[RMDB]
RNA sequence: GGGAACGACUCGAGUAGAGUCGAAAACUUUACACCUUCUAUGGUAAGGAGUCACUUGAGAACCCAACCUACAUUUACCACUCCGCAUUCAUUGAGUGUGGAAGUUGUGGUAAUGAUUCCUGGCUUAGACACCACUAAUGUUCGCAUUAGUGGUGUCAAAAGAAACAACAACAACAAC
Reactivity to DMS in 0.01 (KOAc 150mM, MgCl2 10mM, bicine 150mM(pH8.5), 24C), signal-to-noise 2, nucleotides 027 to 126: c040u000u010u030a130c120a070c050c010u000u010c090u010a050u000g000g000u010a030a110g010g010a080g000u000c020a040c110u000u020g030a090g000a140a150c060c000c010a050a080c140c100u000a080c050a060u000u020u000a040c000c000a000c000u040c000c000g020c000a010u000u000c010a220u000u000g000a010g020u000g000u030g010g000a090a080g000u000u010g030u000g010g000u000a010a010u000g000a240u000u000c010c050u000g000g000c080u000u000a190
Reactivity to 2A3 in 0.01 (KOAc 150mM, MgCl2 10mM, bicine 150mM(pH8.5), 24C), signal-to-noise 2, nucleotides 027 to 126: c000u050u060u070a070c060a030c040c000u070u090c060u190a080u250g030g000u050a010a060g060g000a020g020u050c020a030c040u060u050g070a020g000a160a050c000c000c020a030a000c010c000u040a080c010a070u070u040u050a020c000c000a000c010u000c000c000g000c000a010u000u000c040a060u060u300g020a010g000u000g000u000g000g020a030a040g090u090u110g000u030g000g000u000a000a010u020g020a010u030u060c020c020u030g090g000c020u020u030a020